The record gives the reactivity of an RNA of 177 nucleotides to 2A3 and DMS.
In probing experiments dimethyl sulfate is read out at A N1 and C N3, which are open when not base-paired.
Reactivities are given for positions 27 through 126.
It was measured as part of the RMDB library OK1LIB.
2A3 adducts were read by reverse transcription with SuperScript II with manganese.
DMS adducts were read by reverse transcription with MarathonRT.
The reactions ran in a buffer of 150 mM KOAc, 10 mM MgCl2 and 150 mM bicine (pH 8.5), at 24 C.
RNA sequence: GGGAACGACUCGAGUAGAGUCGAAAAAUAAUGCACAUAAUCCAGUCGCAGACGCUCGCUAGGUCGCUGCGUCGCGACGGAUGUGUCAACGAGAAAGCGACCGAAGGAUAUAGCGUAUAAGCGACUAAAAUUUAUAUUUAUUCGUAAAUAUAAAUUUAAAAGAAACAACAACAACAAC
Reactivity to 2A3 in 0.01 (KOAc 150mM, MgCl2 10mM, bicine 150mM(pH8.5), 24C), signal-to-noise 3, nucleotides 027 to 126: a000u260a010a110u230g040c060a050c010a070u220a200a060u140c040c040a050g000u000c000g000c030a060g000a100c000g000c010u050c010g030c030u090a040g000g070u050c010g000c030u010g010c000g040u010c020g020c010g000a000c000g000g040a050u120g060u060g010u020c030a060a070c040g020a010g130a090a110a010g030c010g030a010c000c020g000a070a050g050g010a030u100a060u160a290g000c020g010u030a040u040a230a050g010c000g020a030c030u080a010
Reactivity to DMS in 0.01 (KOAc 150mM, MgCl2 10mM, bicine 150mM(pH8.5), 24C), signal-to-noise 3, nucleotides 027 to 126: a060u030a070a060u050g000c070a050c090a140u020a070a070u030c020c020a060g000u010c000g010c010a140g020a010c010g020c000u000c130g010c030u020a190g010g000u010c000g040c020u000g010c180g000u000c020g010c300g020a000c010g000g010a070u030g020u030g000u000c060a070a110c080g000a060g000a100a180a030g010c000g000a020c000c010g010a110a160g000g010a180u010a080u030a030g010c000g010u000a060u030a150a180g010c020g000a020c030u000a030